An RNA of 207 nucleotides, treated with 2A3 and DMS and read out base by base. For DMS the reverse transcriptase was MarathonRT. For DMS, 3,619 sequencing reads were counted. For 2A3 the reverse transcriptase was SuperScript II with manganese. The 2A3 profile rests on 1,213 reads.
RNA sequence: GGGAACGACUCGAGUAGAGUCGAAAAUGUUCUGUUCGGCAUGUUCUUCAUUGCCGGCUGUAGCAUGGGAUGGACAGGUAGCGGUGUAGUAGUUGACAAGAACAUGCAUGAAGCCGGUUAUCGUCCCGUGUCUUGGUCCCAGAAGAAUGAGUGGCAGCUAAGGUUUGAUCUUCGGAUCAAACCUUAGAAAAGAAACAACAACAACAAC
Reactivity to 2A3 in 0.01 (KOAc 150mM, MgCl2 10mM, bicine 150mM(pH8.5), 24C), signal-to-noise 2, nucleotides 027 to 156: u110g000u050u030c040u030g040u050u210c010g080g000c040a010u030g030u080u090c080u150u080c050a140u050u220g020c080c020g010g000c020u060g080u110a010g030c000a010u020g000g000g020a000u040g010g020a000c010a040g030g010u080a050g110c080g040g020u060g000u020a100g020u010a070g000u060u050g060a110c030a110a040g020a100a000c030a050u070g030c030a000u140g030a050a010g010c030c000g030g030u040u030a140u140c010g000u010c020c000c010g000u000g030u050c040u020u100g020g000u020c020c030c000a040g040a070a000g010a010a050u140g030a030g070u120g000g050c030a040g000
Reactivity to DMS in 0.01 (KOAc 150mM, MgCl2 10mM, bicine 150mM(pH8.5), 24C), signal-to-noise 2, nucleotides 027 to 156: u000g040u000u000c030u000g020u010u000c020g010g070c010a080u020g020u000u010c060u000u000c000a110u000u000g010c030c030g010g050c010u000g040u000a070g020c020a080u000g010g010g030a230u000g010g000a060c010a100g030g020u000a100g000c180g020g030u000g020u000a060g030u000a090g050u010u000g010a250c230a110a130g010a050a040c040a030u010g020c020a110u000g010a180a300g040c020c020g010g050u000u000a040u000c060g020u010c010c000c010g060u010g000u000c060u030u000g030g000u010c010c000c020a280g000a050a140g000a060a050u010g010a100g010u000g020g000c030a130g050